[RMDB]
RNA sequence: GGGAACGACUCGAGUAGAGUCGAAAAGAUAUGGAACCCUCGAAAGUUACGAAUCCGUGAACUACGCUUAAGAGUCGGAAACGACUUUAAGGCGCACGGACUAUAACUUUCGAGGGUUCCUAAGUCACCAUGAAUGUACCUUCGGGUACAUUCAUGGAAAAGAAACAACAACAACAAC
Reactivity to DMS in 0.01 (KOAc 150mM, MgCl2 10mM, bicine 150mM(pH8.5), 24C), signal-to-noise 1, nucleotides 027 to 126: g000a070u010a300u000g000g000a030a010c000c010c000u000c000g020a000a050a040g020u010u010a090c240g020a150a100u000c020c000g020u000g000a090a060c130u020a300c020g030c000u000u000a160a220g000a060g000u000c000g010g000a110a050a290c000g010a040c000u010u000u000a070a110g000g010c040g000c010a000c000g000g000a000c060u000a170u010a030a010c000u000u000u010c000g010a010g000g000g000u000u010c010c000u020a000a050g020u010c050a300

Structure probing data (DMS) for a 177-nucleotide construct. It was measured as part of the RMDB library TTRINS. The reactions ran in a buffer of 150 mM KOAc, 10 mM MgCl2 and 150 mM bicine (pH 8.5), at 24 C. Values are in units of 0.01, from 0 to 300, in steps of 10.